Structure probing data (2A3) for a 207-nucleotide construct. The RNA was probed in 150 mM KOAc, 10 mM MgCl2 and 150 mM bicine (pH 8.5) at 24 C. 2A3 adducts were read by reverse transcription with SuperScript II with manganese. High 2A3 reactivity points to a flexible backbone, as in loops and unpaired stretches.

[RMDB]
RNA sequence: GGGAACGACUCGAGUAGAGUCGAAAAGCGUACUACUCGCUAAGACAGUGGUAUGGAGUCCAUCUCGUCCCAAAUAGGACACGCGAGAUGGACGUUGAAAUACCAUCGAGCGAGUAUCGCAAAGCCUUAUAAGUUACUUCGGUAACUUAUAAGGCAAGUACGUGCAAGGCUUCGGCCUUGCACGUACAAAAGAAACAACAACAACAAC
Reactivity to 2A3 in 0.01 (KOAc 150mM, MgCl2 10mM, bicine 150mM(pH8.5), 24C), signal-to-noise 2, nucleotides 027 to 156: g050c000g000u080a040c010u010a000c000u000c000g000c050u020a090a000g160a150c130a080g090u020g000g000u000a000u010g000g020a000g020u020c040c000a010u000c000u010c000g100u100c000c010c020a210a300a130u300a100g020g020a030c080a040c120g020c000g020a000g000a000u000g010g010a000c000g000u010u020g000a000a000a000u000a010c050c010a050u030c020g000a000g000c000g000a000g000u000a000u100c000g000c020a000a070a070g010c000c000u010u000a000u000a000a000g000u000u000a000c010u010u170c300g070g000u010a000a000c000u000u020a000u000a000a000g000g000c000a000a000